[RMDB]
RNA sequence: GGGAACGACUCGAGUAGAGUCGAAAACACCAGGACCAUCGUUUAAUUCAGAAGAUGCUGCAGAUAUCCGUGCUGGAAGACUGCCCCUGGGCACUCGACCAAAUAGAAGAACUGUCAGAGAAACUGACAGUGACGGCAGUUUCGACUGCCGUCACUGAAAAGAAACAACAACAACAAC
Reactivity to 2A3 in 0.01 (KOAc 150mM, MgCl2 10mM, bicine 150mM(pH8.5), 24C), signal-to-noise 1, nucleotides 027 to 126: c030a010c000c010a000g070g020a040c080c000a030u120c040g040u030u160u130a250a140u150u110c060a090g060a100a000g020a190u020g040c030u070g000c010a010g050a050u070a030u160c020c000g090u130g060c020u070g030g000a000a030g100a020c050u030g020c000c010c020c050u140g000g000g000c000a020c020u040c010g030a030c020c000a030a080a100u190a070g120a120a040g020a000a070c000u020g010u130c020a010g020a020g040a130a110a050c000u000g000a000
Reactivity to DMS in 0.01 (KOAc 150mM, MgCl2 10mM, bicine 150mM(pH8.5), 24C), signal-to-noise 2, nucleotides 027 to 126: c120a230c050c020a100g000g000a120c080c030a040u000c060g000u000u020u000a040a180u000u000c050a040g010a100a060g020a070u000g000c100u000g000c040a040g010a050u000a050u000c000c090g000u000g020c130u000g010g050a020a150g000a040c040u000g040c010c120c030c120u000g020g030g010c020a040c080u000c040g040a300c030c040a040a070a120u010a060g030a040a160g000a110a060c020u000g000u000c000a000g020a180g000a110a110a100c010u000g000a030

The record gives the reactivity of an RNA of 177 nucleotides to 2A3 and DMS. The RNA was probed in 150 mM KOAc, 10 mM MgCl2 and 150 mM bicine (pH 8.5) at 24 C. The DMS profile rests on 1,176 reads. It was measured as part of the RMDB library OK2TST. For 2A3 the reverse transcriptase was SuperScript II with manganese.